[RMDB]
RNA sequence: GGGAACGACUCGAGUAGAGUCGAAAAGAUAUGGACAUCAAUAGACAUGCUCACAUCGGAAACGAUGUACGCGAGCAACAGCUAUGGAUGUCCUAAGUCAAAAUCGAUCACGUUCGCGUGAUCGAAAGUAAACUAGAGUCUUCGGACUCUAGUUUACAAAAGAAACAACAACAACAAC
Reactivity to 2A3 in 0.01 (KOAc 150mM, MgCl2 10mM, bicine 150mM(pH8.5), 24C), signal-to-noise 5, nucleotides 027 to 126: g000a000u020a010u040g000g020a000c000a000u000c020a030a010u010a010g100a120c170a300u120g000c000u020c000a000c000a010u000c000g000g000a020a010a000c010g020a000u010g040u080a040c270g100c110g070a000g030c000a030a110c120a120g030c010u000a000u010g050g000a000u010g000u000c000c000u010a010a000g010u000c010a020a020a020a280u030c010g000a000u000c000a000c010g020u100u080c300g020c010g170u010g010a010u000c000g000a000a000a010
Reactivity to DMS in 0.01 (KOAc 150mM, MgCl2 10mM, bicine 150mM(pH8.5), 24C), signal-to-noise 5, nucleotides 027 to 126: g010a020u000a080u000g000g000a020c010a000u010c000a050a010u000a010g000a050c060a120u010g020c000u000c010a080c010a010u000c010g000g000a050a030a030c000g020a010u010g000u000a060c190g040c300g000a000g010c000a120a150c140a120g010c000u000a000u000g000g010a010u000g010u000c000c000u000a010a030g010u000c010a080a080a110a100u000c010g000a010u000c000a010c000g010u000u020c200g030c010g020u000g010a010u000c010g000a000a030a100